[RMDB]
RNA sequence: GGGAACGACUCGAGUAGAGUCGAAAAGAAAGAAAGAAAGAACGAUGGCGAUGAUGAUUUCUAGAUUUUUGCUCUCCUGAUGUAGCCGUGAGGGUGCAAAGUCACUACCUCAUCUGAUGCCAUCUAACGUCCCCGUUAGGUUCGCCUAACGGGGACGAAAAGAAACAACAACAACAAC
Reactivity to 2A3 in 0.01 (KOAc 150mM, MgCl2 10mM, bicine 150mM(pH8.5), 24C), signal-to-noise 2, nucleotides 027 to 126: g040a020a000a030g140a150a080a000g200a060a120a000g020a080a000c090g000a000u010g000g000c000g000a000u050g000a000u000g010a000u170u090u000c060u050a080g000a040u240u240u120u100u000g000c000u000c020u080c040c050u070g080a120u160g080u300a050g030c060c030g040u050g160a000g000g000g080u020g090c000a000a000a000g000u050c000a000c180u060a060c000c000u000c000a000u010c000u040g030a030u140g040c010c000a000u000c040u000a010a000